Structure probing data (DMS and 2A3) for a 177-nucleotide construct. Values cover nucleotides 27 to 126. The reactions ran in a buffer of 150 mM KOAc, 10 mM MgCl2 and 150 mM bicine (pH 8.5), at 24 C.
RNA sequence: GGGAACGACUCGAGUAGAGUCGAAAACUCAGUAAAAUUGCUGAUAAGGGGUAAGUUAAAAGCAAUCCUAAGUAAAAUUGCAGAUAAGAGGUAAGUUAAAAGCAAUCCUAAGUAAAAUUGCAGAUAACUUAGCGUAGAAGUUCGCUUCUACGCUAAGAAAAGAAACAACAACAACAAC
Reactivity to DMS in 0.01 (KOAc 150mM, MgCl2 10mM, bicine 150mM(pH8.5), 24C), signal-to-noise 3, nucleotides 027 to 126: c030u000c030a120g040u020a050a050a070a140u010u020g000c020u000g020a080u010a070a230g000g000g000g040u020a020a060g020u010u010a020a030a120a200g040c130a020a020u010c020c040u050a030a120g000u000a030a110a060a040u000u000g030c000a070g000a180u000a040a060g010a060g000g000u050a070a170g030u010u020a050a040a170a200g010c020a030a060u000c040c040u060a050a060g010u040a030a050a060a100u010u000g010c020a110g010a130u010a050a150
Reactivity to 2A3 in 0.01 (KOAc 150mM, MgCl2 10mM, bicine 150mM(pH8.5), 24C), signal-to-noise 2, nucleotides 027 to 126: c010u000c000a000g070u000a000a080a270a300u260u120g000c030u000g050a070u070a230a030g070g070g000g000u010a090a110g050u280u070a060a080a000a010g000c000a000a010u090c040c030u070a040a020g050u070a050a040a060a110u060u100g000c040a000g080a120u080a210a000g040a000g110g020u050a010a090g050u080u090a220a030a020a000g000c000a050a030u070c000c070u160a140a000g090u300a120a040a110a180u010u000g000c000a000g000a120u020a040a030